RNA sequence: GGGAACGACUCGAGUAGAGUCGAAAACGAGGAGUUGACCCGGAGCGAGGAGUUGACCCUGAGUGAGGAAGCGACCUGGAGUGAAGAGGCGACCCAGAGUGAGGAGGCGACCCAGGGCGAAGAGAUGUGCAGGGAAAAUGUUCGCAUUUUCCCUGCAAAAAGAAACAACAACAACAAC
Reactivity to 2A3 in 0.01 (KOAc 150mM, MgCl2 10mM, bicine 150mM(pH8.5), 24C), signal-to-noise 2, nucleotides 027 to 126: c020g030a060g060g000a080g010u110u090g090a100c000c000c030g060g020a140g050c090g030a050g040g040a170g120u080u050g020a000c000c000c010u020g020a010g030u070g070a070g060g000a020a010g080c030g040a020c020c030u070g000g000a080g080u160g030a090a130g020a000g010g000c020g010a050c010c030c030a060g020a000g030u120g000a030g010g000a060g000g060c000g000a040c020c000c020a000g020g020g000c070g040a050a050g050a010g010a030u010g050
Reactivity to DMS in 0.01 (KOAc 150mM, MgCl2 10mM, bicine 150mM(pH8.5), 24C), signal-to-noise 2, nucleotides 027 to 126: c030g020a190g000g000a230g000u050u000g030a100c100c000c000g010g020a080g000c060g000a110g010g000a060g020u000u000g000a130c000c020c010u040g010a100g010u000g010a050g000g020a120a030g000c040g000a070c080c000u030g000g000a120g010u010g000a050a130g020a090g010g030c010g000a150c040c020c000a080g000a060g000u020g030a120g000g000a100g000g000c000g020a130c010c010c050a040g010g000g020c000g010a020a040g020a100g040a070u000g000

Chemical mapping of a 177-nucleotide RNA with 2A3 and DMS. As a SHAPE reagent, 2A3 marks flexible, mostly unpaired nucleotides at the ribose 2'-OH. It was measured as part of the RMDB library RFM100.